The record gives the reactivity of an RNA of 177 nucleotides to 2A3 and DMS. For 2A3, 2,558 sequencing reads were counted. For DMS, 1,928 sequencing reads were counted. 2A3 adducts were read by reverse transcription with SuperScript II with manganese.

RNA sequence: GGGAACGACUCGAGUAGAGUCGAAAAGAUAUGGAAGAAGCACCUUUUGACGCCAAGUCGGAAACGACCCUGGCGAUAAGGUGACUUCUUCCUAAGUCAAAGGCUCUCAGGUUCGCCUGAGAGCCAACUCCUGAGUAAGGUUCGCCUUACUCAGGAGAAAAGAAACAACAACAACAAC
Reactivity to 2A3 in 0.01 (KOAc 150mM, MgCl2 10mM, bicine 150mM(pH8.5), 24C), signal-to-noise 1, nucleotides 027 to 126: g000a000u070a000u200g000g000a000a010g000a010a000g020c020a020c000c020u010u150u210u300g240a110c020g000c020c000a000a020g000u020c000g000g020a050a050a020c040g000a010c140c010c170u040g000g000c000g010a010u010a040a020g000g000u000g000a000c000u000u000c000u020u010c000c000u010a000a000g010u010c050a050a050a080g010g000c010u030c000u010c020a020g080g050u050u130c230g130c040c000u010g000a010g000a010g040c010c000a030a000
Reactivity to DMS in 0.01 (KOAc 150mM, MgCl2 10mM, bicine 150mM(pH8.5), 24C), signal-to-noise 2, nucleotides 027 to 126: g000a010u000a300u010g000g010a000a000g000a040a010g010c000a020c000c000u000u000u000u000g000a210c050g020c000c020a080a150g000u000c000g000g000a060a080a180c000g020a010c030c110c180u000g010g010c010g010a070u010a030a000g010g010u000g000a060c020u000u000c000u000u000c000c000u000a010a080g000u000c020a070a130a130g000g010c000u000c000u000c000a000g000g000u000u010c250g000c000c000u000g000a000g000a000g000c010c010a000a030